Structure probing data (2A3 and DMS) for a 177-nucleotide construct. High DMS reactivity at an A or C suggests that its Watson-Crick edge is free. The reactions ran in a buffer of 150 mM KOAc, 10 mM MgCl2 and 150 mM bicine (pH 8.5), at 24 C. It was measured as part of the RMDB library OK2TST. For 2A3 the reverse transcriptase was SuperScript II with manganese.
RNA sequence: GGGAACGACUCGAGUAGAGUCGAAAAGUCCGGGUGGGUGAACUCUGAGGCCACCUCGUAGAGGUCGCGCGGGAAGAUCUCGAGCCCCUUGGGAGAGAUCUUGUUGAGCGUCUGGAUCUUGAACAUCCACCACCUCAUUUUUCGAAAUGAGGUGGUGAAAAGAAACAACAACAACAAC
Reactivity to 2A3 in 0.01 (KOAc 150mM, MgCl2 10mM, bicine 150mM(pH8.5), 24C), signal-to-noise 2, nucleotides 027 to 126: g070u050c010c000g010g000g040u100g000g090g030u050g050a090a010c040u060c170u300g070a100g080g130c000c020a050c010c020u010c040g030u030a050g000a030g030g000u020c000g030c000g000c010g040g020g050a040a020g000a020u010c000u010c030g130a250g080c000c020c010c030u150u300g040g000g000a060g010a020g010a010u000c010u060u070g260u070u090g060a060g030c000g000u040c140u050g110g000a050u050c000u050u080g030a040a000c030a070u020c050
Reactivity to DMS in 0.01 (KOAc 150mM, MgCl2 10mM, bicine 150mM(pH8.5), 24C), signal-to-noise 3, nucleotides 027 to 126: g000u000c030c030g040g020g020u010g010g000g020u010g010a080a150c130u000c130u010g020a150g020g000c030c020a120c020c010u010c020g020u020a080g010a080g000g010u000c040g010c010g000c010g000g000g000a030a030g000a020u000c000u000c000g020a280g000c030c020c060c220u030u000g030g030g010a290g000a000g000a010u000c000u010u000g010u000u000g000a080g010c020g010u000c130u010g010g000a070u000c040u000u000g000a120a130c120a070u010c080